RNA sequence: GGGAACGACUCGAGUAGAGUCGAAAACUGCUGGCCAGAGUGCUCGAGCCCUACUCCUGCAAAGGAUGUCGCUACCUCAUCGACGCACAGUACAGCGCCACCGAGGAUUCGGUUCUUGCCUAUGGCAGGGGAGGGGUACGUUCGCGUACCCCUCCCCAAAAGAAACAACAACAACAAC
Reactivity to 2A3 in 0.01 (KOAc 150mM, MgCl2 10mM, bicine 150mM(pH8.5), 24C), signal-to-noise 2, nucleotides 027 to 126: c060u080g020c010u000g210g180c000c010a020g000a020g080u240g030c090u050c090g010a010g060c040c000c010u050a120c060u000c010c000u000g110c040a000a140a300g000g010a080u150g110u000c000g040c010u110a200c020c000u040c080a160u110c080g030a050c070g050c060a000c020a150g040u110a110c010a030g000c000g000c040c010a030c010c000g040a050g000g060a120u050u030c040g000g020u000u000c020u000u050g010c000c000u200a110u180g000g010c000a070
Notes
An RNA of 177 nucleotides, treated with 2A3 and read out base by base. The reactions ran in a buffer of 150 mM KOAc, 10 mM MgCl2 and 150 mM bicine (pH 8.5), at 24 C. For 2A3 the reverse transcriptase was SuperScript II with manganese.